[RMDB]
RNA sequence: GGGAACGACUCGAGUAGAGUCGAAAACGCCACAGGAUCGUAACCACCAGCAAGAGGUGGCCAAGCUUAUCGACGUCACCACCUGUAUCGGCUGCAAAGCCUGUCAGGUGGCCUGUUCGGAGUGGAAGUUAAACGUCCCCUUCGGGGGACGUUUAACAAAAGAAACAACAACAACAAC
Reactivity to DMS in 0.01 (KOAc 150mM, MgCl2 10mM, bicine 150mM(pH8.5), 24C), signal-to-noise 1, nucleotides 027 to 126: c210g060c000c050a070c000a210g020g000a050u000c030g020u010a210a300c000c020a000c030c020a040g000c220a100a170g000a080g000g010u000g030g000c000c020a160a240g000c020u000u000a080u030c000g000a030c010g000u000c290a120c010c000a010c000c000u020g000u000a050u000c220g040g020c000u000g000c130a030a110a030g050c010c000u000g000u000c030a000g000g000u000g000g000c200c020u000g000u000u020c050g000g000a130g000u000g000g000a070a120
Description
Conditions: 150 mM KOAc, 10 mM MgCl2 and 150 mM bicine (pH 8.5), 24 C. Chemical mapping of a 177-nucleotide RNA with DMS. DMS adducts were read by reverse transcription with MarathonRT. The DMS profile rests on 550 reads. Values cover nucleotides 27 to 126. The data come from the RNA Mapping Database (RMDB), library OK2TST.